Source information:
Conditions: 150 mM KOAc, 10 mM MgCl2 and 150 mM bicine (pH 8.5), 24 C. Chemical mapping of a 177-nucleotide RNA with 2A3 and DMS. 2A3 adducts were read by reverse transcription with SuperScript II with manganese. The 2A3 profile rests on 2,227 reads. DMS adducts were read by reverse transcription with MarathonRT.
RNA sequence: GGGAACGACUCGAGUAGAGUCGAAAAAGAUAUGGUCAGCCUUACGAGGCUGACCAUAUCAGGGUCGUGACUGGCGAACAGGUGGGAAACCACCGGGGAGCGACCCUUGCCGCCCGCCUGGGCAAAAUGCUCUUAUUCCAUUCGUGGAAUAAGAGCAAAAAGAAACAACAACAACAAC
Reactivity to 2A3 in 0.01 (KOAc 150mM, MgCl2 10mM, bicine 150mM(pH8.5), 24C), signal-to-noise 3, nucleotides 027 to 126: a000g020a000u000a010u000g020g000u000c000a000g020c000c000u070u050a090c300g040a030g000g000c000u000g000a010c000c000a010u010a000u000c010a000g000g000g010u000c000g000u010g010a030c010u050g030g080c070g050a170a070c060a110g020g010u020g000g000g020a110a150a100c000c000a000c000c000g010g000g010g000a040g010c000g000a010c000c000c000u000u040g050c010c010g000c010c000c010g120c080c180u230g000g000g000c000a070a070a010a020
Reactivity to DMS in 0.01 (KOAc 150mM, MgCl2 10mM, bicine 150mM(pH8.5), 24C), signal-to-noise 1, nucleotides 027 to 126: a080g020a000u000a000u010g010g010u020c000a000g010c000c000u000u000a240c150g000a030g040g060c000u000g000a000c020c000a000u000a000u010c010a090g000g020g010u000c000g010u020g000a250c000u010g000g060c140g000a090a100c110a090g000g000u020g000g040g020a160a070a220c010c000a010c000c000g010g000g000g000a300g000c000g000a040c000c000c000u030u010g030c040c030g000c010c010c040g000c120c110u000g000g010g010c020a000a040a100a130